[RMDB]
RNA sequence: GGGAACGACUCGAGUAGAGUCGAAAAGGUCGUGAAUAAGCCCGGAGUACAUUCCCAAUGGAACUAGGGAACCCCUCCGGUCGUAUCCAACCUCUGUUUCGGCAGAGGAUACCGUACUCCACAGCUGUAAGGCUGUGGGCCCGAGAGAAGUCGCUCUAUCCUAGAUGAUCUUCGGAUCAUCUAGGAUAAAAGAAACAACAACAACAAC
Reactivity to 2A3 in 0.01 (KOAc 150mM, MgCl2 10mM, bicine 150mM(pH8.5), 24C), signal-to-noise 1, nucleotides 027 to 156: g060g030u090c020g030u100g230a060a080u060a040a040g000c000c010c000g010g000a030g010u120a060c080a160u000u010c000c000c030a000a030u190g150g090a140a050c200u130a200g000g010g000a010a000c000c030c000c000u000c010c010g030g040u010c000g010u010a050u000c000c010a050a020c010c000u030c000u070g090u030u080u120c290g190g000c000a010g030a000g020g010a000u040a000c000c010g000u030a040c030u000c020c000a000c010a000g020c000u030g100u300a140a030g030g000c000u000g000u000g000g000g020c020c000c010g030a040g010a000g050a100a020g140u180c070g020c040u000c000u010